[RMDB]
RNA sequence: GGGAACGACUCGAGUAGAGUCGAAAAACUGCUAGCCAGGGCACACAGACAGGGAGCCUAGCCCUCUUAAAGCCUCUAUCUCUCUGGCUACUCUGAUUCAGGUGCAGGUGCACAGAGAACACAGGGGACUUUCGUUUCUGUUCGCAGAAACGAAAGUAAAAGAAACAACAACAACAAC
Reactivity to DMS in 0.01 (KOAc 150mM, MgCl2 10mM, bicine 150mM(pH8.5), 24C), signal-to-noise 1, nucleotides 027 to 126: a130c050u000g020c110u000a090g020c000c000a060g020g000g020c290a100c090a030c130a050g010a130c110a100g000g010g000a050g000c020c020u000a080g010c020c040c030u000c090u000u000a080a110a090g020c000c000u000c010u000a150u000c090u000c000u000c020u000g000g010c000u020a010c030u020c020u000g000a180u000u010c050a100g030g000u000g010c020a050g000g000u000g020c020a070c020a060g020a040g010a090a060c180a010c110a040g010g000g000g000
An RNA of 177 nucleotides, treated with DMS and read out base by base. The RNA was probed in 150 mM KOAc, 10 mM MgCl2 and 150 mM bicine (pH 8.5) at 24 C.